The record gives the reactivity of an RNA of 177 nucleotides to 2A3 and DMS. The reactions ran in a buffer of 150 mM KOAc, 10 mM MgCl2 and 150 mM bicine (pH 8.5), at 24 C. Reactivities are given for positions 27 through 126. For 2A3, 774 sequencing reads were counted. For DMS, 2,427 sequencing reads were counted. For 2A3 the reverse transcriptase was SuperScript II with manganese.

RNA sequence: GGGAACGACUCGAGUAGAGUCGAAAAGCUUGUACAUGCAUGCGUGUAUGAGGUGAACUUAUGUCAGUGUGUUUGUUUAAUGAACUUGUGACUAGCUUGGGGUGGCUUAUGCAGGCAUGCCUGCAUACUGACCUCAUUGGUUCGCCAAUGAGGUCAGAAAAGAAACAACAACAACAAC
Reactivity to 2A3 in 0.01 (KOAc 150mM, MgCl2 10mM, bicine 150mM(pH8.5), 24C), signal-to-noise 2, nucleotides 027 to 126: g110c020u030u060g060u090a000c000a000u030g000c000a000u060g000c010g040u010g040u020a020u090g060a030g070g080u160g090a030a010c000u120u150a130u240g100u070c030a060g020u030g130u040g070u200u070u090g130u030u130u110a210a250u190g040a030a020c020u010u080g010u070g090a050c060u090a010g010c040u000u080g000g030g000g120u080g050g030c010u000u010a000u020g000c000a000g000g000c000a020u020g060c000c000u000g000c010a020u010a000
Reactivity to DMS in 0.01 (KOAc 150mM, MgCl2 10mM, bicine 150mM(pH8.5), 24C), signal-to-noise 1, nucleotides 027 to 126: g040c010u000u020g040u000a020c040a010u000g010c010a020u000g010c000g050u000g000u000a000u000g020a000g040g080u000g000a150a170c090u040u030a030u010g020u010c040a050g000u000g010u020g000u010u020u010g040u020u040u030a140a090u040g000a070a090c010u000u020g000u010g020a060c020u040a020g030c080u000u020g030g010g000g020u000g010g000c130u010u020a000u000g010c000a020g000g000c000a030u030g040c000c000u000g010c010a000u000a010